Conditions: 150 mM KOAc, 10 mM MgCl2 and 150 mM bicine (pH 8.5), 24 C. The record gives the reactivity of an RNA of 207 nucleotides to DMS and 2A3. DMS adducts were read by reverse transcription with MarathonRT. The 2A3 profile rests on 4,614 reads.
[RMDB]
RNA sequence: GGGAACGACUCGAGUAGAGUCGAAAAACAUGCUGGCCAACCCAACCCUACGAUCCUCCAUCGGCAUGAUCAUGAUGUGUUCUCAAAUAUCAGGCCAGUAAAUCACCAUGCUCGUGCUGGUAAAGGCAACUUAUGCCCAAGUUCGCUUGGGCAUAAACAUAUACACGUCGUUCGCGACGUGUAUAUGAAAAGAAACAACAACAACAAC
Reactivity to DMS in 0.01 (KOAc 150mM, MgCl2 10mM, bicine 150mM(pH8.5), 24C), signal-to-noise 2, nucleotides 027 to 156: a080c030a090u010g010c000u000g010g010c030c020a100a170c080c030c040a100a080c060c030c020u000a090c090g010a110u000c000c000u000c020c010a070u000c010g000g000c030a050u000g030a020u000c010a040u010g000a010u010g000u010g010u000u000c080u010c040a110a080a160u010a120u000c070a100g000g010c000c020a070g000u000a000a040a120u000c010a020c030c010a010u000g000c080u000c040g020u010g010c010u000g010g000u000a020a040a060g020g000c060a060a090c100u000u000a030u000g000c000c000c010a020a050g020u000u000c300g000c040u010u000g010g000g020c010a000u010a000a020a150
Reactivity to 2A3 in 0.01 (KOAc 150mM, MgCl2 10mM, bicine 150mM(pH8.5), 24C), signal-to-noise 5, nucleotides 027 to 156: a000c040a030u060g000c000u000g000g000c000c000a030a070c100c020c060a060a090c040c010c050u100a070c080g120a150u080c020c020u030c040c040a040u030c010g000g000c000a000u000g000a000u010c010a010u010g050a040u050g030u000g030u050u010c040u000c030a080a120a030u260a100u120c070a030g000g010c000c000a000g000u010a000a030a020u120c010a010c030c000a000u000g000c000u000c000g010u010g000c010u000g010g000u040a160a150a020g050g010c030a060a070c050u030u020a000u010g000c000c000c000a010a010g010u050u090c120g000c120u000u010g020g000g000c000a000u000a000a000a000